[RMDB]
RNA sequence: GGGAACGACUCGAGUAGAGUCGAAAACGAACGGGAGCUUAGGGCAUUGCCCGGUGAUGUACAGUCCCUUUCCACAACGUUGGAGAUGAAGCUGGGCUUUCGAGUCUGCGCCUGCAUAUUCCUACGAAUGCUUUACUAUGUUCGCAUAGUAAAGCAUAAAAGAAACAACAACAACAAC
Reactivity to 2A3 in 0.01 (KOAc 150mM, MgCl2 10mM, bicine 150mM(pH8.5), 24C), signal-to-noise 9, nucleotides 027 to 126: c040g040a040a000c030g010g000g020a040g040c020u100u150a090g070g060g000c050a180u050u240g020c000c000c010g020g020u040g010a060u140g060u110a060c040a040g090u080c020c000c000u000u020u010c080c010a110c060a180a050c080g060u080u030g020g010a050g000a050u060g040a030a020g000c020u020g000g020g010c000u030u050u060c080g020a010g030u000c020u030g010c040g010c020c010u030g010c010a010u030a090u090u050c010c010u040a040c040g120a130
Reactivity to DMS in 0.01 (KOAc 150mM, MgCl2 10mM, bicine 150mM(pH8.5), 24C), signal-to-noise 9, nucleotides 027 to 126: c130g000a110a100c070g010g000g000a090g010c040u010u010a090g010g000g010c060a100u010u020g010c010c010c010g000g020u000g010a100u020g010u020a080c160a130g000u010c020c030c040u010u010u000c010c020a050c120a110a130c170g010u010u000g000g010a060g000a040u000g010a140a160g010c020u010g000g000g000c020u010u000u010c080g010a070g010u000c020u000g010c120g000c030c010u000g000c060a050u010a150u010u000c000c000u000a070c180g010a120